[RMDB]
RNA sequence: GGGAACGACUCGAGUAGAGUCGAAAAUCCAAGGGGUUCGCCCCUUGGAAAAUAAGGGAAACCGAGCAUUCCGGUCGACUCCGGACAGCCAAAGUCAAAUAAAAACCGUUGGGUUCGCCCAACGGAACAGAUUAUUAUUGUUCGCAAUAAUAAUCUGAAAAGAAACAACAACAACAAC
Reactivity to DMS in 0.01 (KOAc 150mM, MgCl2 10mM, bicine 150mM(pH8.5), 24C), signal-to-noise 2, nucleotides 027 to 126: u000c000c000a000a010g010g010g020g040u010u020c250g020c020c010c010c010u000u020g000g010a010a010a050a050u000a130a100g000g000g000a110a150a200c020c020g030a100g010c050a160u010u000c010c000g000g000u000c030g040a040c010u010c010c030g000g000a040c110a060g010c170c090a020a030a020g000u000c000a120a090a090u010a090a080a160a210a090c020c000g010u000u010g000g000g020u000u000c220g020c000c000c000a010a010c000g000g000a020a040
Reactivity to 2A3 in 0.01 (KOAc 150mM, MgCl2 10mM, bicine 150mM(pH8.5), 24C), signal-to-noise 2, nucleotides 027 to 126: u000c000c000a000a000g040g010g000g000u030u080c160g070c000c000c000c000u000u000g000g000a010a010a000a020u060a020a040g030g020g020a070a050a030c020c020g000a020g030c090a160u160u000c010c050g000g000u010c050g030a020c050u010c180c020g000g050a070c050a010g030c000c020a040a020a000g020u060c020a050a120a080u120a020a150a040a050a080c010c000g000u000u000g020g010g030u040u040c180g070c020c000c000a010a000c000g000g000a000a000
Annotation: The record gives the reactivity of an RNA of 177 nucleotides to DMS and 2A3. The RNA was probed in 150 mM KOAc, 10 mM MgCl2 and 150 mM bicine (pH 8.5) at 24 C.